RNA sequence: GGGAACGACUCGAGUAGAGUCGAAAACGACGGUACGGACGCCCUCAUGCUCAGCGGAGAGACUGCGUACGGCAAGUACCCCGUGGAGGCGGUGAAGACCAUGGUGCGAGUGGCCUCCACGGCCGAGGUACUUGGCGCAAUUCGUUGCGCCAAGUACAAAAGAAACAACAACAACAAC
Reactivity to 2A3 in 0.01 (KOAc 150mM, MgCl2 10mM, bicine 150mM(pH8.5), 24C), signal-to-noise 6, nucleotides 027 to 126: c050g090a020c030g000g030u050a020c010g020g130a030c100g030c010c010c020u050c040a060u110g010c020u040c110a040g030c040g100g060a180g020a030g040a200c040u050g010c020g020u030a070c040g030g000c020a050a040g010u030a030c000c000c020c000g000u000g000g010a010g010g010c080g070g060u120g080a080a030g080a050c030c030a130u210g170g010u200g090c030g010a080g040u110g140g010c000c000u000c000c000a000c000g000g000c010c020g030a060g020
Reactivity to DMS in 0.01 (KOAc 150mM, MgCl2 10mM, bicine 150mM(pH8.5), 24C), signal-to-noise 5, nucleotides 027 to 126: c140g000a120c080g010g020u000a050c020g000g010a110c140g010c030c060c030u000c060a100u010g020c030u000c110a110g040c100g010g010a090g000a110g010a090c030u010g010c050g010u010a050c130g010g010c050a050a090g010u000a060c020c020c000c000g030u010g010g010a030g010g010c010g000g010u000g000a140a100g010a050c030c030a090u000g010g010u000g010c050g000a210g020u000g010g010c000c000u000c010c000a010c000g010g010c140c060g000a100g010
About this RNA: Conditions: 150 mM KOAc, 10 mM MgCl2 and 150 mM bicine (pH 8.5), 24 C. This 177-nucleotide RNA was probed chemically with 2A3 and DMS. For DMS the reverse transcriptase was MarathonRT. The DMS profile rests on 6,868 reads. The data come from the RNA Mapping Database (RMDB), library OK2TST. For 2A3, 8,325 sequencing reads were counted.